An RNA of 177 nucleotides, treated with 2A3 and DMS and read out base by base. For 2A3, 415 sequencing reads were counted. For DMS, 1,434 sequencing reads were counted. For 2A3 the reverse transcriptase was SuperScript II with manganese.
RNA sequence: GGGAACGACUCGAGUAGAGUCGAAAAUCUUAGGUAGAAGGGAUGCCUAUCCAGAAAUAGGAUAGGUCGCAGUGGCAAGGGGACCCCGACUGUUUACCAAAAACACAGACCGCUGCUAGUCCGUAAGUCAACACCGCUCUUUCGAGAGCGGUGUUGAAAAAGAAACAACAACAACAAC
Reactivity to 2A3 in 0.01 (KOAc 150mM, MgCl2 10mM, bicine 150mM(pH8.5), 24C), signal-to-noise 1, nucleotides 027 to 126: u120c040u000u240a080g010g030u000a010g110a280a010g010g000g000a010u060g000c000c000u000a000u010c040c040a030g250a150a280a130u300a170g000g000a000u000a000g000g000u000c080g040c030a000g000u000g000g000c070a030a030g090g000g000g170a120c010c000c010c010g010a000c020u010g210u140u010u140a030c000c060a010a000a010a010a010c100a000c000a010g190a070c000c000g000c000u060g000c010u000a000g000u000c000c000g110u000a170a000g120
Reactivity to DMS in 0.01 (KOAc 150mM, MgCl2 10mM, bicine 150mM(pH8.5), 24C), signal-to-noise 2, nucleotides 027 to 126: u000c010u010u000a050g010g010u000a100g000a230a190g000g020g030a030u010g000c040c000u000a010u000c010c000a090g000a100a170a170u000a040g020g000a000u040a000g000g000u000c080g050c090a000g020u000g000g060c110a080a090g000g000g000g010a140c060c000c000c120g000a050c120u000g000u000u030u030a130c140c250a010a070a060a020a180c040a020c210a270g000a300c010c000g010c010u000g000c010u000a060g000u020c030c020g010u010a070a160g000